Source information
Structure probing data (2A3 and DMS) for a 207-nucleotide construct. The DMS profile rests on 4,163 reads. High 2A3 reactivity points to a flexible backbone, as in loops and unpaired stretches. The data come from the RNA Mapping Database (RMDB), library M2RFPK. DMS adducts were read by reverse transcription with MarathonRT. The RNA was probed in 150 mM KOAc, 10 mM MgCl2 and 150 mM bicine (pH 8.5) at 24 C.
[RMDB]
RNA sequence: GGGAACGACUCGAGUAGAGUCGAAAAGGGACGCCUUUAGAACAAGAGGCUAGGUGGUAUUCCGGUGUGGGAUACUUGGUAAUAUGUAACGCUAAUUGCAUAAGAUUGUAGGACGGAAUUUACAGUCAAAACGGUCCUGCGUUCGCGCAGGACCGAACUAUGCUAAUGACUUCGGUCAUUAGCAUAGAAAAGAAACAACAACAACAAC
Reactivity to 2A3 in 0.01 (KOAc 150mM, MgCl2 10mM, bicine 150mM(pH8.5), 24C), signal-to-noise 5, nucleotides 027 to 156: g010g000g010a010c030g010c010c010u040u020u060a250g030a200a030c050a100a040g010a000g050g000c020u020a030g020g060u060g010g010u040a040u060u000c030c020g040g090u200g030u100g050g000g000a010u020a080c020u020u080g020g010u070a090a090u050a070u120g030u030a050a010c050g010c160u090a120a020u110u070g000c010a030u020a080a050g030a050u010u070g020u020a030g000g070a020c050g030g030a020a020u100u060u030a060c030a020g020u040c050a020a020a060a090c010g010g000u000c000c000u000g000c000g010u030u070c170g000c010g000c060a000g000g000a000c000c010g010a000a000
Reactivity to DMS in 0.01 (KOAc 150mM, MgCl2 10mM, bicine 150mM(pH8.5), 24C), signal-to-noise 2, nucleotides 027 to 156: g020g000g020a120c110g030c010c000u000u000u000a120g020a130a170c070a120a150g010a070g000g010c030u000a070g010g040u020g020g010u000a100u010u000c020c000g010g030u020g020u010g030g000g020a090u000a020c020u000u000g030g020u000a110a170u000a070u000g000u010a040a110c080g030c110u010a060a100u000u000g000c000a100u000a090a110g010a080u000u020g010u000a030g000g000a150c050g020g000a140a210u000u010u000a060c010a030g000u000c030a050a030a060a140c010g030g000u000c010c000u020g000c010g040u000u000c270g020c010g080c070a000g020g000a010c010c000g010a010a010